[RMDB]
RNA sequence: GGGAACGACUCGAGUAGAGUCGAAAAAUGGUACUAUGUAUGGUGCCUUUAUGGAUAAACAAGUGCACCAAGUUCAGUUAACAGACAAAUACUGCAGUGUUAAUGUAGUAGCUUGGCUUUACGCAGCGACCUCUUUGCUUCGGCAAAGAGAAAAGAAACAACAACAACAAC
Reactivity to 2A3 in 0.01 (KOAc 150mM, MgCl2 10mM, bicine 150mM(pH8.5), 24C), signal-to-noise 8, nucleotides 027 to 129: a020u140g020g000u080a030c030u080a050u220g140u060a070u150g080g000u020g000c000c000u000u050u000a080u060g110g030a000u160a050a050a010c070a090a070g040u060g170c000a000c000c000a010a000g020u020u050c030a010g000u050u060a090a040c000a030g170a020c040a040a070a010u090a080c040u020g040c030a040g030u020g030u240u170a060a060u010g040u040a030g000u010a020g040c060u000u010g030g000c010u040u080u100a070c060g000c010a010g030c040g050a040c000
Reactivity to DMS in 0.01 (KOAc 150mM, MgCl2 10mM, bicine 150mM(pH8.5), 24C), signal-to-noise 6, nucleotides 027 to 129: a040u110g020g000u010a050c050u020a070u000g060u050a070u000g030g040u000g030c000c060u000u000u000a080u050g050g030a120u000a040a080a080c190a000a010g020u060g050c040a050c030c000a020a110g020u010u010c090a030g050u000u000a030a070c120a050g030a050c060a030a010a030u020a010c060u000g000c060a000g040u070g000u010u000a010a020u000g020u030a000g040u000a020g000c080u000u000g000g030c050u010u060u010a040c050g020c050a080g050c090g020a050c130
An RNA of 170 nucleotides, treated with 2A3 and DMS and read out base by base. For DMS the reverse transcriptase was MarathonRT.